Background: Chemical mapping of a 207-nucleotide RNA with 2A3 and DMS. For DMS the reverse transcriptase was MarathonRT. 2A3 adducts were read by reverse transcription with SuperScript II with manganese. Values cover nucleotides 27 to 156. The RNA was probed in 150 mM KOAc, 10 mM MgCl2 and 150 mM bicine (pH 8.5) at 24 C.

RNA sequence: GGGAACGACUCGAGUAGAGUCGAAAAUAGGCGAACGAGAGGCCCUCUCUUGUGCGGAGUUGUCACGCUGACAAAAUUGUUAUGAUGUCCGAUUCCGGUAGCAUCGCGGCGAUGAUUUCAUAGGACAUCUUAUGAACCCAAGAGCUUCGGGGAAGCACCACCCAUACUAUUUCGAUAGUAUGGGUGGAAAAGAAACAACAACAACAAC
Reactivity to 2A3 in 0.01 (KOAc 150mM, MgCl2 10mM, bicine 150mM(pH8.5), 24C), signal-to-noise 2, nucleotides 027 to 156: u180a040g010g020c010g010a020a040c030g010a020g020a010g140g010c000c000c000u080c000u000c000u010u110g040u060g030c050g000g030a090g020u050u060g090u100c050a010c100g030c050u040g010a040c070a020a100a100a130u130u100g060u120u130a020u110g040a040u010g010u000c000c020g040a110u110u160c060c010g020g030u030a020g060c020a030u020c070g020c050g110g020c060g050a050u040g030a060u030u220u080c100a090u100a040g000g000a020c010a040u010c000u000u030a090u080g030a020a030c000c000c040a120a020g070a020g100c000u110u100c140g040g000g020g010a030a000g000c000a000
Reactivity to DMS in 0.01 (KOAc 150mM, MgCl2 10mM, bicine 150mM(pH8.5), 24C), signal-to-noise 2, nucleotides 027 to 156: u010a130g020g020c050g020a030a040c030g000a070g030a070g010g000c080c080c020u000c030u000c010u000u020g020u000g030c000g010g010a170g000u000u010g010u000c020a090c060g040c060u010g010a220c040a060a080a090a160u000u010g010u020u000a080u010g000a040u000g020u020c020c010g020a300u010u000c080c050g020g010u010a060g010c040a050u000c020g030c060g030g000c030g030a090u000g000a090u010u000u010c060a090u000a080g040g020a040c100a010u000c010u000u000a020u020g000a030a130c060c010c030a030a100g000a210g020c050u000u000c040g000g020g050g020a120a070g010c030a230